Background:
An RNA of 177 nucleotides, treated with 2A3 and DMS and read out base by base. For 2A3, 3,564 sequencing reads were counted. For DMS, 4,498 sequencing reads were counted.
[RMDB]
RNA sequence: GGGAACGACUCGAGUAGAGUCGAAAAGGCUUGGUCAGCGUUCUUGUUGACCAUCGGCACUCCAGCCGGGGGCACUGAGGACAGGCUGGAUCAGGAUGUAUGCGCCAUGUCGGUCAUCGAGAGAGCAACUCACGCAUUAUUUCGAUAAUGCGUGAGUAAAAGAAACAACAACAACAAC
Reactivity to 2A3 in 0.01 (KOAc 150mM, MgCl2 10mM, bicine 150mM(pH8.5), 24C), signal-to-noise 3, nucleotides 027 to 126: g060g000c010u020u020g020g000u040c020a020g000c020g060u110u090c080u090u110g020u020u020g040a100c000c000a040u080c020g010g000c020a010c090u000c030c030a010g000c010c000g020g000g010g010g000c050a040c110u120g040a050g000g080a030c020a050g090g000c010u020g010g050a040u030c030a020g090g010a070u080g060u110a060u130g070c060g020c040c030a070u130g070u090c040g000g040u020c030a050u030c080g040a060g000a010g010a000g030c010a020
Reactivity to DMS in 0.01 (KOAc 150mM, MgCl2 10mM, bicine 150mM(pH8.5), 24C), signal-to-noise 4, nucleotides 027 to 126: g010g020c060u000u000g010g010u000c020a030g030c020g020u010u010c170u000u010g030u000u000g000a020c020c000a040u000c050g000g000c020a130c160u010c130c090a100g020c010c030g000g000g000g000g010c070a070c080u010g010a080g010g000a070c080a100g020g010c020u000g010g000a030u000c060a070g010g010a090u000g000u010a050u000g010c090g000c050c030a060u000g010u010c060g020g010u000c050a050u000c030g010a110g000a080g000a060g030c130a120
DMS adducts were read by reverse transcription with MarathonRT.
2A3 adducts were read by reverse transcription with SuperScript II with manganese.